[RMDB]
RNA sequence: GGGAACGACUCGAGUAGAGUCGAAAAGCUCAGGCAUUGUCACCAGUAUUUUGGGACAUUGUGGGGAGUCUUGUCUUGGGGUUGCAGUCCUGGCUCCAUCCCUGAAGCAGCUGUGGCUACGUGGACAACCUGUCCAGUAAUUCGUUACUGGACAGGUAAAAGAAACAACAACAACAAC
Reactivity to DMS in 0.01 (KOAc 150mM, MgCl2 10mM, bicine 150mM(pH8.5), 24C), signal-to-noise 5, nucleotides 027 to 126: g000c020u000c010a090g010g010c020a020u000u000g020u000c010a170c000c000a040g010u010a150u010u000u010u000g000g000g000a020c010a020u000u010g030u000g010g010g010g010a050g000u010c070u000u000g010u000c060u000u000g010g010g010g010u000u000g020c060a070g010u010c070c060u010g010g000c010u000c030c030a070u010c050c050c050u000g010a070a070g010c040a060g020c040u010g010u000g010g000c020u000a050c070g000u000g000g000a070c110a100
Reactivity to 2A3 in 0.01 (KOAc 150mM, MgCl2 10mM, bicine 150mM(pH8.5), 24C), signal-to-noise 5, nucleotides 027 to 126: g020c010u010c030a000g060g030c020a030u020u040g040u030c090a210c300c000a030g060u110a300u120u290u230u050g010g000g010a000c020a010u030u050g030u040g020g130g030g010a020g020u040c030u060u080g060u030c050u050u070g080g000g000g000u040u030g020c000a010g000u040c020c030u020g040g010c010u030c020c020a080u050c030c020c010u040g060a070a010g040c020a010g000c030u030g010u080g110g000c000u010a050c060g080u100g000g020a020c020a030
The data come from the RNA Mapping Database (RMDB), library OK2TRN. The record gives the reactivity of an RNA of 177 nucleotides to DMS and 2A3. The RNA was probed in 150 mM KOAc, 10 mM MgCl2 and 150 mM bicine (pH 8.5) at 24 C. Values cover nucleotides 27 to 126. For DMS, 11,641 sequencing reads were counted.